The data come from the RNA Mapping Database (RMDB), libraries RFM100 and RFMREP. The record gives the reactivity of an RNA of 177 nucleotides to DMS and 2A3. Conditions: 150 mM KOAc, 10 mM MgCl2 and 150 mM bicine (pH 8.5), 24 C. Values cover nucleotides 27 to 126.

RNA sequence: GGGAACGACUCGAGUAGAGUCGAAAAGGAGCCGGAUGCUGAGAAUGAGGCCUGCAACUCAUUUCCCCAUUAAACAUUCUGAGAACAUCUGCACCGGUUUCCAAGGCUUCUCCCUCACUAAUUGCUUUAGAUUUAUCGAAUUCGUUCGAUAAAUCUAAAAAGAAACAACAACAACAAC
Reactivity to DMS in 0.01 (KOAc 150mM, MgCl2 10mM, bicine 150mM(pH8.5), 24C), signal-to-noise 2, nucleotides 027 to 126: g000g000a040g000c040c010g000g000a090u000g040c040u000g020a020g000a070a060u020g000a100g000g000c020c020u000g010c040a060a070c060u000c000a060u010u000u010c000c020c000c130a110u030u020a050a090a120c120a100u000u000c050u000g000a100g010a100a140c090a070u000c040u040g000c010a030c030c000g010g000u020u030u020c000c000a060a140g000g010c100u000u000c010u010c030c010c000u030c020a050c160u020a040a140u030u010g000c100u000u000
Reactivity to 2A3 in 0.01 (KOAc 150mM, MgCl2 10mM, bicine 150mM(pH8.5), 24C), signal-to-noise 9, nucleotides 027 to 126: g010g000a000g010c010c000g010g010a140u030g000c020u040g020a030g040a130a060u060g010a030g030g060c010c020u040g030c040a060a040c010u010c030a030u030u030u040c010c020c020c010a070u150u190a090a130a070c050a070u140u080c060u130g060a050g030a130a040c040a120u040c020u040g000c000a010c000c000g010g000u020u170u010c010c000a020a020g020g010c000u070u010c010u040c010c010c010u060c020a100c030u120a150a080u140u190g040c000u010u010